Overview
This 207-nucleotide RNA was probed chemically with 2A3 and DMS. Values cover nucleotides 27 to 156.

[RMDB]
RNA sequence: GGGAACGACUCGAGUAGAGUCGAAAAGUCACGUUCGCGUGACCCAUAACCGUAGGACGAUAUCAGAGCUUGGAUUUACGAAAUGUGUUCGAAAGAGCACAUCAAGUUGUCAGCUCUGUAAGUCGUCCUAAACGGCCGUUACCGGUUUCGACCGGAACACUUGUACACCCUUCGGGGUGUACAAGUGAAAAGAAACAACAACAACAAC
Reactivity to 2A3 in 0.01 (KOAc 150mM, MgCl2 10mM, bicine 150mM(pH8.5), 24C), signal-to-noise 4, nucleotides 027 to 156: g010u030c000a010c050g020u040u110c290g030c000g110u000g000a030c000c010c010a150u280a110a060c000c010g000u010a010g000g000a000c000g000a000u030a060u150c000a010g000a010g010c020u140u280g150g010a110u280u290u190a010c000g020a030a050a000u020g010u010g000u000u010c020g060a100a070a040g000a000g010c010a010c010a010u010c010a030a050g010u010u000g030u030c000a000g000c010u000c010u000g000u000a000a000g000u000c010g010u010c000c000u000a000a010a000c000g020g010c010c010g110u080u140a190c010c020g000g070u080u110u160c200g090a040c010c000g000g000a020a010
Reactivity to DMS in 0.01 (KOAc 150mM, MgCl2 10mM, bicine 150mM(pH8.5), 24C), signal-to-noise 1, nucleotides 027 to 156: g010u010c000a000c000g050u000u010c300g000c050g070u000g000a010c000c010c030a110u020a030a140c000c000g030u000a040g020g000a000c030g010a040u000a300u000c030a040g010a030g030c000u000u010g070g040a010u010u000u000a010c030g030a090a040a010u060g050u010g050u000u010c000g030a170a170a300g000a020g000c030a000c000a000u010c000a050a300g010u000u000g040u000c000a130g000c010u000c000u010g000u000a000a110g150u000c000g080u000c000c000u010a000a010a070c000g060g040c030c090g020u000u010a120c030c010g010g000u020u000u010c240g020a010c000c020g000g000a070a270

For 2A3, 2,861 sequencing reads were counted. For 2A3 the reverse transcriptase was SuperScript II with manganese. Source: RMDB library RNAMAK, as collected in RNAgym.